[RMDB]
RNA sequence: GGGAACGACUCGAGUAGAGUCGAAAAGAGAGGGUAACCACCGGCGCGCGACACUGAUAUAUCCACCGGGGGGUAAGGGGAGAAAAGGAUACAGCGCGACGAAGUUAGCACGCUGCCCCGUAAGGCUUGAAGAGUGUAGUGUUCGCACUACACUCAAGAAUGCAUCUUGAUUCGUCAAGAUGCAUUCAAAAGAAACAACAACAACAAC
Reactivity to DMS in 0.01 (KOAc 150mM, MgCl2 10mM, bicine 150mM(pH8.5), 24C), signal-to-noise 3, nucleotides 027 to 156: g010a080g020a110g020g020g010u000a070a170c050c010a100c060c030g000g010c030g050c040g070c020g010a170c130a130c110u010g000a140u000a270u010a120u010c020c070a080c040c040g000g000g040g020g030g000u000a050a050g000g010g020g000a100g000a080a040a110a070g000g010a100u000a080c030a170g010c000g000c040g020a090c030g000a050a080g020u000u000a100g010c050a050c060g000c020u000g020c000c020c010c030g010u010a060a080g010g030c040u000u000g000a100a180g000a030g010u010g020u020a020g020u000g000u010u000c260g000c000a020c000u000a010c010a020c000u000c000a010a060
Reactivity to 2A3 in 0.01 (KOAc 150mM, MgCl2 10mM, bicine 150mM(pH8.5), 24C), signal-to-noise 4, nucleotides 027 to 156: g070a000g010a030g030g030g010u050a050a020c040c020a040c090c000g000g020c040g000c010g010c010g050a010c020a030c140u070g090a060u070a030u020a010u180c030c030a040c050c050g020g020g020g010g000g030u100a060a040g040g010g000g010a050g050a030a100a020a010g030g000a020u050a090c040a020g010c000g000c010g000a010c010g000a070a010g050u070u080a030g040c050a010c090g010c010u040g010c010c000c000c010g020u050a050a030g000g020c040u090u110g060a120a080g010a060g000u000g000u010a010g000u000g020u020u020c080g040c030a000c000u010a000c000a000c000u020c000a000a000